[RMDB]
RNA sequence: GGGAACGACUCGAGUAGAGUCGAAAACGUAAAGGGUGCUCAGCUGUCAUCGAUGUGGCUCCUUCAGAUGCACCCAUUUUUCUUGCCAGAUUACAAAUAAAGCUUGCAUACUGAAGGAAAGAUGAGACGUCCAUCCAGGGUUCGCCCUGGAUGGACGAAAAGAAACAACAACAACAAC
Reactivity to 2A3 in 0.01 (KOAc 150mM, MgCl2 10mM, bicine 150mM(pH8.5), 24C), signal-to-noise 2, nucleotides 027 to 126: c000g030u040a000a070a000g030g010g000u010g070c040u080c100a030g000c020u050g030u060c000a070u040c010g110a130u200g090u190g000g010c000u000c070c000u000u000c000a000g000a040u040g000c000a020c010c010c010a000u100u100u000u060u040c060u000u080g000c040c000a000g000a030u000u240a230c080a170a040a110u280a070a220a030g100c090u090u010g000c000a020u070a300c000u000g000a000a000g000g000a000a130a000g050a020u080g010a000g000a020
An RNA of 177 nucleotides, treated with 2A3 and read out base by base. The reactions ran in a buffer of 150 mM KOAc, 10 mM MgCl2 and 150 mM bicine (pH 8.5), at 24 C. 2A3 adducts were read by reverse transcription with SuperScript II with manganese.